The record gives the reactivity of an RNA of 207 nucleotides to 2A3. The 2A3 profile rests on 470 reads. Reactivities are given for positions 27 through 156. Values are in units of 0.01, from 0 to 300, in steps of 10. It was measured as part of the RMDB library OK3TST. The reactions ran in a buffer of 150 mM KOAc, 10 mM MgCl2 and 150 mM bicine (pH 8.5), at 24 C.
RNA sequence: GGGAACGACUCGAGUAGAGUCGAAAACAGCGUGCUAGUCGUUGUAGACAAGCACCUUGCUAACGAAGCUUUCUGCAAGCUGGUCUCGCGCCGCUACGACGUCUUCGUUCUCGACGAAGCGCACACGUAUAACCUCAUGAACCUUUCUGCGAUGACGGGUGCCUUCUAUGUUCGCAUAGAAGGCACCAAAAGAAACAACAACAACAAC
Reactivity to 2A3 in 0.01 (KOAc 150mM, MgCl2 10mM, bicine 150mM(pH8.5), 24C), signal-to-noise 1, nucleotides 027 to 156: c050a000g030c000g000u010g030c030u000a070g030u050c090g110u070u190g120u110a000g000a030c090a050a000g010c000a070c000c000u060u060g110c060u170a160a180c090g130a090a020g000c000u100u030u030c050u040g000c050a010a040g060c000u040g010g000u040c110u020c040g000c020g000c140c000g000c000u010a080c060g290a070c000g090u000c000u000u000c010g080u020u110c060u080c200g050a020c020g010a050a110g030c000g000c020a050c000a000c150g030u090a070u040a150a160c020c050u010c060a100u210g030a050a190c000c000u070u140u020c050u070g040c080g040a090u110g040a010c000g040